[RMDB]
RNA sequence: GGGAACGACUCGAGUAGAGUCGAAAAUGGUACAUAUCAUGAGGGCAUCUACGCUACCAGUGAGGUCAGAUGGCACACCUCUCGAGCCCUUUAUUGAGGUCAGCUUUGUGUAUGAAACGGUGCACUCAGGUAUGAUCGUAUUCGUACGAUCAUACCUAAAAGAAACAACAACAACAAC
Reactivity to DMS in 0.01 (KOAc 150mM, MgCl2 10mM, bicine 150mM(pH8.5), 24C), signal-to-noise 3, nucleotides 027 to 126: u010g040g040u030a060c110a060u010a050u010c040a070u010g030a070g000g010g000c030a030u000c060u040a070c180g000c050u000a060c030c010a130g000u020g010a040g010g020u010c070a070g020a120u010g000g030c050a050c180a070c010c020u010c000u030c050g000a050g030c010c030c040u000u010u030a070u030u010g000a060g000g000u020c070a070g000c000u000u010u020g010u030g010u040a080u030g000a050a040a090c160g000g010u000g010c020a030c040u000c080
Reactivity to 2A3 in 0.01 (KOAc 150mM, MgCl2 10mM, bicine 150mM(pH8.5), 24C), signal-to-noise 5, nucleotides 027 to 126: u200g040g030u160a080c060a060u160a030u140c080a080u090g020a060g020g000g000c000a030u000c030u030a060c090g020c020u050a080c010c010a050g080u050g100a050g030g050u060c090a060g060a180u060g080g000c060a030c010a010c070c020u050c000u020c030g020a050g020c000c000c000u040u050u030a150u030u120g060a020g000g010u050c040a020g000c030u050u150u140g100u030g010u000a030u090g120a090a100a000c070g040g010u020g010c010a000c020u060c050
Chemical mapping of a 177-nucleotide RNA with DMS and 2A3. Values cover nucleotides 27 to 126. The RNA was probed in 150 mM KOAc, 10 mM MgCl2 and 150 mM bicine (pH 8.5) at 24 C. For 2A3 the reverse transcriptase was SuperScript II with manganese.